[RMDB]
RNA sequence: GGGAACGACUCGAGUAGAGUCGAAAAUGGAAGACUGAUGGCGCGACCGUAUUUUUGCUAGAUGCAGCAACAGCCACCGCCGCCUCCUGAUCCCGCGAUGCGGGCGGCGCUGCAGAGCCAGCCGUCCGGCAUUAACUCCUCGGACGAUUGGACCCAGUCUUAUAAAGGAGUUCGCUCCUUUAUAAGAAAAAGAAACAACAACAACAAC
Reactivity to 2A3 in 0.01 (KOAc 150mM, MgCl2 10mM, bicine 150mM(pH8.5), 24C), signal-to-noise 2, nucleotides 027 to 156: u100g010g010a080a030g050a110c090u060g020a050u060g070g000c040g000c060g070a060c030c010g060u040a160u040u180u020u130u110g040c030u080a060g010a140u070g030c020a030g000c030a030a050c020a090g010c000c000a020c050c040g000c010c010g030c000c010u040c000c030u030g030a120u050c000c040c000g000c060g010a050u090g040c050g000g060g000c020g030g000c010g000c020u020g000c030a030g010a070g190c010c020a000g010c020c000g000u000c000c000g020g000c020a000u070u140a050a050c030u060c040c010u040c020g040g000a020c010g030a030u020u040g000g000a010c020c000c020a050g040
Reactivity to DMS in 0.01 (KOAc 150mM, MgCl2 10mM, bicine 150mM(pH8.5), 24C), signal-to-noise 1, nucleotides 027 to 156: u000g000g000a070a090g010a080c070u000g020a060u000g000g040c030g020c050g020a140c040c000g000u000a060u010u000u000u010u010g020c040u000a100g010a090u000g000c030a060g020c000a120a080c050a080g020c030c030a020c090c000g000c010c030g040c010c000u000c040c020u010g000a150u000c050c000c080g000c130g020a120u000g030c000g020g020g030c020g030g050c030g000c050u010g000c060a170g000a100g010c010c010a150g040c050c020g050u000c010c020g040g030c020a050u010u010a100a130c100u000c040c040u000c000g040g010a040c000g010a120u000u000g020g010a150c000c020c020a210g010